Annotation:
The data come from the RNA Mapping Database (RMDB), library OK1LIB. This 177-nucleotide RNA was probed chemically with 2A3. Values are in units of 0.01, from 0 to 300, in steps of 10.

RNA sequence: GGGAACGACUCGAGUAGAGUCGAAAACAAAACUGACCAGCUAUGAGGUCAUACAUCGUCAUAGGAAAACAAAACAAAACUGACCAGUUAUGAGGUCAUACAUCGUCAUAACAAACAAAACAACAAAAUACGAGCGUCAUUUCGAUGACGCUCGUAUAAAAGAAACAACAACAACAAC
Reactivity to 2A3 in 0.01 (KOAc 150mM, MgCl2 10mM, bicine 150mM(pH8.5), 24C), signal-to-noise 1, nucleotides 027 to 126: c040a000a080a000a060c140u110g030a000c000c000a020g000c020u020a030u010g010a000g020g000u000c000a000u170a020c010a120u190c240g010u000c070a000u030a000g270g020a000a030a190a000c130a000a040a020a070c160a000a080a080a000c120u050g010a000c000c000a000g000u000u000a000u000g000a000g000g000u020c020a000u300a080c160a070u190c020g120u000c000a000u000a000a000c020a000a040a000c120a000a170a030a000c020a000a000c000a000a220a000